[RMDB]
An RNA of 177 nucleotides, treated with DMS and read out base by base. Conditions: 150 mM KOAc, 10 mM MgCl2 and 150 mM bicine (pH 8.5), 24 C.
RNA sequence: GGGAACGACUCGAGUAGAGUCGAAAAUGGCCGUACGUACAGGAUCCGUACCGCAGAGUCUAUGAGCGCAUGCUGCUAUCGAUCGUGAUCUGGCCGUACUCGAUCGUCUCAGGCCUAGGCCUACGUCUGGAGAGAGUCUGUUCGCAGACUCUCUCCAAAAAGAAACAACAACAACAAC
Reactivity to DMS in 0.01 (KOAc 150mM, MgCl2 10mM, bicine 150mM(pH8.5), 24C), signal-to-noise 1, nucleotides 027 to 126: u030g000g020c010c050g040u000a080c090g020u000a160c060a100g000g000a030u000c110c030g000u000a030c070c160g000c040a070g000a200g020u000c060u000a100u070g020a090g000c100g020c110a070u020g090c030u020g000c060u010a040u010c130g000a010u000c040g000u000g000a120u000c020u040g020g000c090c030g000u000a030c000u000c060g020a040u000c040g000u010c020u000c040a030g000g010c000c030u000a100g020g000c010c010u000a060c150g000u020c080